An RNA of 207 nucleotides, treated with 2A3 and read out base by base. Reactivities are given for positions 27 through 156. The data come from the RNA Mapping Database (RMDB), library OK3TST. The reactions ran in a buffer of 150 mM KOAc, 10 mM MgCl2 and 150 mM bicine (pH 8.5), at 24 C.
RNA sequence: GGGAACGACUCGAGUAGAGUCGAAAAAAACAAAUCAAGAUUCAUAUGGUGGUGCAUCUGUUUGUAUUUAUUGUCGCGCUUAUGUUGAACAUCCAACCGUUGAUGGUUUAUGUCAAUUUAAGGGUAGAUUUGUUCAAGUACCAUUAGGGACUAAAGACGUAUCAUCACCGUUCGCGGUGAUGAUACGAAAAGAAACAACAACAACAAC
Reactivity to 2A3 in 0.01 (KOAc 150mM, MgCl2 10mM, bicine 150mM(pH8.5), 24C), signal-to-noise 2, nucleotides 027 to 156: a000a000a000c150a040a040a040u130c090a070a040g010a080u100u030c050a000u100a080u220g070g010u020g000g000u020g000c000a020u010c030u080g020u080u060u010g060u100a180u050u200u040a060u080u130g140u020c050g000c000g030c060u040u070a000u040g010u000u010g000a020a000c000a020u030c060c060a020a020c020c000g140u120u110g160a160u190g010g050u000u030u050a030u020g020u000c000a010a000u020u030u040a060a030g060g000g010u070a030g110a110u120u060u050g020u000u030c020a060a040g040u050a080c000c000a020u050u140a060g020g000g010a000c010u000a000a020a160g030a000